[RMDB]
RNA sequence: GGGAACGACUCGAGUAGAGUCGAAAAAGGAAUAGUGUAGCUGUUUAAUAACUGUUGAAUGGUAGAUUUAUGUUUUUUACUUGUGAUUUUUUGUAGGUCCUGUGUCUGAUGAUGAGUCACCUUCUCCUGAUUCAACUACCUCACCUCCUGAAAUUCACUGGCAAUAGAUAUUCGUAUCUAUUGCCAGAAAAGAAACAACAACAACAAC
Reactivity to DMS in 0.01 (KOAc 150mM, MgCl2 10mM, bicine 150mM(pH8.5), 24C), signal-to-noise 2, nucleotides 027 to 156: a070g010g020a070a090u000a030g010u000g030u000a130g010c010u010g000u000u000u000a100a130u000a070a100c090u010g030u000u000g020a080a050u000g010g020u000a070g000a090u010u000u020a100u020g010u010u020u010u000u000u010a090c060u000u000g030u010g010a020u000u020u000u010u010u010g000u030a100g050g010u000c050c030u020g000u000g020u000c040u000g020a100u010g010a090u000g010a110g000u010c010a040c050c050u010u010c000u000c030c040u000g010a120u000u000c040a040a100c040u000a040c040c020u010c030a040c080c000u020c000c000u000g010a030a050a110u000u000c040a210
Reactivity to 2A3 in 0.01 (KOAc 150mM, MgCl2 10mM, bicine 150mM(pH8.5), 24C), signal-to-noise 4, nucleotides 027 to 156: a000g070g000a090a050u060a090g030u040g000u070a000g030c020u020g060u100u060u070a110a080u120a090a030c030u060g030u040u030g070a040a050u060g050g030u060a080g030a100u070u140u040a040u110g050u030u060u040u010u030u070a040c040u070u040g030u030g070a100u050u050u030u060u130u180g040u070a050g030g020u030c040c030u040g000u030g020u040c040u020g040a060u040g020a030u050g000a030g010u020c010a020c020c000u080u100c020u030c010c020u020g010a030u040u040c010a030a040c030u050a030c030c020u030c020a040c010c010u040c000c020u070g060a040a100a130u100u080c060a020